Structure probing data (DMS) for a 177-nucleotide construct. It was measured as part of the RMDB library M2PK90.
[RMDB]
RNA sequence: GGGAACGACUCGAGUAGAGUCGAAAAUGAAAAUUUAAACUGGUGGGGCAGUGUCUAGGAUUCACGUUAGACACUGCUUUUUGCCCGUUUCAAACAGGUGAAUACAAACCGUCAUAAAAUAAAAAAAGUUAGAAGAGUAGUUCGCUACUCUUCUAACAAAAGAAACAACAACAACAAC
Reactivity to DMS in 0.01 (KOAc 150mM, MgCl2 10mM, bicine 150mM(pH8.5), 24C), signal-to-noise 1, nucleotides 027 to 126: u010g000a040a070a090a070u010u000u000a040a090a090c150u010g020g050u000g010g040g000g010c000a000g010u000g000u030c000u000a000g020g000a260u010u010c170a070c150g000u000u000a000g010a010c000a030c000u020g010c000u000u000u000u000u000g010c030c000c070g000u010u000u010c270a030a070a060c070a040g020g040u010g010a020a100u120a300c180a050a050a070c030c020g010u000c050a040u030a020a030a080a040u020a030a020a100a080a040a090a160
For DMS the reverse transcriptase was MarathonRT.